[RMDB]
RNA sequence: GGGAACGACUCGAGUAGAGUCGAAAAAAUUAAGUGAAUUAAAAUAAACAUGAAGAUCAAGAUCAAGAUACAAACGGCAAGUAUCGUUCGAUCCAUGAAAUAAAUAAUAUCACAAAGCCGAAUAUAACUGUAGAGUGUAAUUCGUUACACUCUACAGAAAAGAAACAACAACAACAAC
Reactivity to 2A3 in 0.01 (KOAc 150mM, MgCl2 10mM, bicine 150mM(pH8.5), 24C), signal-to-noise 2, nucleotides 027 to 126: a060a000u300u240a150a020g000u000g000a020a030u020u090a000a100a080a120u040a000a020a010c000a000u030g010a110a110g060a090u050c070a060a020g010a040u060c030a080a060g020a110u000a010c000a010a110a000c010g060g000c090a090a090g000u000a010u000c010g030u030u000c010g000a000u000c030c000a010u010g000a300a300a000u020a010a020a010u080a010a050u070a090u040c010a000c010a030a070a140g000c010c000g050a070a000u190a020u030a040a120
Reactivity to DMS in 0.01 (KOAc 150mM, MgCl2 10mM, bicine 150mM(pH8.5), 24C), signal-to-noise 2, nucleotides 027 to 126: a020a040u010u000a060a160g000u000g000a050a020u000u000a010a000a030a120u020a170a110a060c010a000u020g000a150a080g000a060u000c080a060a180g000a060u000c060a090a100g000a010u000a000c000a050a110a070c090g030g000c120a120a100g000u000a000u000c000g000u010u010c200g010a000u000c000c020a000u000g000a000a090a030u000a040a070a060u000a020a020u000a160u000c000a000c000a070a030a110g010c020c020g000a150a040u000a080u000a060a080
Conditions: 150 mM KOAc, 10 mM MgCl2 and 150 mM bicine (pH 8.5), 24 C. This 177-nucleotide RNA was probed chemically with 2A3 and DMS. The DMS profile rests on 1,283 reads. High 2A3 reactivity points to a flexible backbone, as in loops and unpaired stretches. 2A3 adducts were read by reverse transcription with SuperScript II with manganese. Values are in units of 0.01, from 0 to 300, in steps of 10.